[RMDB]
RNA sequence: GGGAACGACUCGAGUAGAGUCGAAAAGCUCGGGUAAGCUCACCUGUUUUGCUAGCGUACUAAAGCUCCACGUAACCACGCCUGCCAUCAACACCGUGAGUGCAAGAUAGAGCGGCCAAGCAAGACCGCUUACGGUAAGCUUCGGCUUACCGUAAGCAAAAGAAACAACAACAACAAC
Reactivity to 2A3 in 0.01 (KOAc 150mM, MgCl2 10mM, bicine 150mM(pH8.5), 24C), signal-to-noise 1, nucleotides 027 to 126: g010c020u010c010g090g000g000u110a120a000g050c000u020c020a030c000c000u030g010u020u100u050u050g020c040u030a050g000c010g110u080a090c050u110a080a150a030g000c000u020c000c010a040c020g060u080a060a000c060c020a010c010g060c000c040u030g030c040c000a100u080c020a030a010c010a020c000c030g050u020g080a080g060u120g070c030a050a020g020a110u140a060g020a010g000c030g000g000c000c000a020a010g010c020a000a080g020a060c000c020
Reactivity to DMS in 0.01 (KOAc 150mM, MgCl2 10mM, bicine 150mM(pH8.5), 24C), signal-to-noise 1, nucleotides 027 to 126: g000c000u000c040g040g000g040u010a050a120g010c020u010c050a040c070c110u010g000u000u000u010u010g010c030u000a090g010c060g030u040a070c090u000a070a060a100g000c020u010c070c010a050c030g020u000a090a070c070c040a070c080g010c050c020u010g010c000c080a050u010c170a050a050c060a050c100c030g020u020g010a030g040u000g000c070a060a010g000a100u000a100g000a110g010c000g010g000c000c040a080a080g020c080a060a080g010a100c090c070
Chemical mapping of a 177-nucleotide RNA with 2A3 and DMS. In probing experiments dimethyl sulfate is read out at A N1 and C N3, which are open when not base-paired. For 2A3 the reverse transcriptase was SuperScript II with manganese. The RNA was probed in 150 mM KOAc, 10 mM MgCl2 and 150 mM bicine (pH 8.5) at 24 C. 2A3 is a SHAPE reagent: it acylates the 2'-hydroxyl of flexible nucleotides of all four kinds.